Chemical mapping of a 207-nucleotide RNA with DMS and 2A3.
The DMS profile rests on 2,073 reads.
High 2A3 reactivity points to a flexible backbone, as in loops and unpaired stretches.
RNA sequence: GGGAACGACUCGAGUAGAGUCGAAAAUCAGAGAUCCUUCAGAGCUCGUAGGGUCUAGAAAGAUCAUUAUUUUACACCCUCAUUUUACAGACAAAGAACCUGAGACCUGCUAGAGUAAGUGACUUGGUUAAGAUAGGGAGCGCUCCAGAGACCAGGUUAAUCUUUUGUUUUUCGAAACAAAAGAUUAAAAAGAAACAACAACAACAAC
Reactivity to DMS in 0.01 (KOAc 150mM, MgCl2 10mM, bicine 150mM(pH8.5), 24C), signal-to-noise 2, nucleotides 027 to 156: u010c030a120g010a180g010a020u010c000c000u000u010c030a090g010a090g020c050u010c080g040u000a080g020g040g040u000c010u050a080g000a080a050a060g000a080u000c010a100u010u000a120u000u000u050u000a070c080a060c030c010c030u010c030a110u010u010u020u000a250c100a120g000a080c050a100a090a150g010a050a040c020c010u010g020a120g020a030c020c030u000g040c100u010a060g010a080g010u000a050a120g030u000g010a090c000u010u000g000g010u010u010a060a110g000a180u010a030g000g000g030a250g010c040g020c030u000c020c010a190g010a120g000a050c050c010a050g000g020u000
Reactivity to 2A3 in 0.01 (KOAc 150mM, MgCl2 10mM, bicine 150mM(pH8.5), 24C), signal-to-noise 2, nucleotides 027 to 156: u080c010a000g030a000g010a160u020c020c000u020u020c030a100g010a040g230c110u090c170g060u080a040g010g010g020u010c000u040a080g090a090a110a020g080a030u150c050a050u050u180a110u070u110u100u090a020c020a030c030c000c070u050c040a070u050u110u140u170a040c040a070g010a020c040a020a170a030g040a050a070c010c000u070g000a020g040a180c040c020u090g040c040u110a020g020a010g100u090a110a060g030u040g060a040c010u010u020g060g010u160u120a090a120g040a160u120a080g070g000g000a030g010c060g000c000u010c040c010a020g020a010g020a120c030c000a010g010g000u040
The 2A3 profile rests on 993 reads.